Structure probing data (DMS and 2A3) for a 177-nucleotide construct. Values cover nucleotides 27 to 126. The reactions ran in a buffer of 150 mM KOAc, 10 mM MgCl2 and 150 mM bicine (pH 8.5), at 24 C. 2A3 adducts were read by reverse transcription with SuperScript II with manganese. Source: RMDB library OK2TRN, as collected in RNAgym. For 2A3, 116,732 sequencing reads were counted.
RNA sequence: GGGAACGACUCGAGUAGAGUCGAAAAGGAUCCUCUCACAGGAUUGUCUCUGUGUUCCGAAACUCCAACAGUAUUGCUUCGGGACACCUACAGCAAUACUGUAGGUAUAGAGAGUAGGAGAGGAUCGCUAGUGCUGAGUAUUCGUACUUAGCACUAGAAAAGAAACAACAACAACAAC
Reactivity to DMS in 0.01 (KOAc 150mM, MgCl2 10mM, bicine 150mM(pH8.5), 24C), signal-to-noise 9, nucleotides 027 to 126: g010g000a010u000c000c000u000c010u000c000a120c100a140g010g010a140u010u010g010u000c020u000c000u000g010u000g010u000u000c010c010g010a040a040a070c010u000c050c110a110a110c180a120g010u010a200u010u000g010c050u000u000c160g000g000g000a040c170a050c010c000u000a020c060a010g010c050a080a080u010a300c000u000g000u000a010g000g000u000a070u010a030g000a030g000a060g010u000a120g000g000a030g010a010g020g010a000u000c000g010
Reactivity to 2A3 in 0.01 (KOAc 150mM, MgCl2 10mM, bicine 150mM(pH8.5), 24C), signal-to-noise 9, nucleotides 027 to 126: g030g000a000u000c010c010u000c000u010c010a190c040a080g130g100a220u140u220g120u030c010u000c000u020g040u000g010u050u000c000c000g010a020a020a010c020u040c030c030a090a070c030a160g110u130a130u100u180g030c010u010u010c010g010g000g020a030c010a040c000c000u010a010c010a010g030c050a070a100u060a270c000u000g000u000a000g000g010u020a030u190a050g050a000g010a010g050u110a070g000g090a010g000a000g000g000a000u000c000g000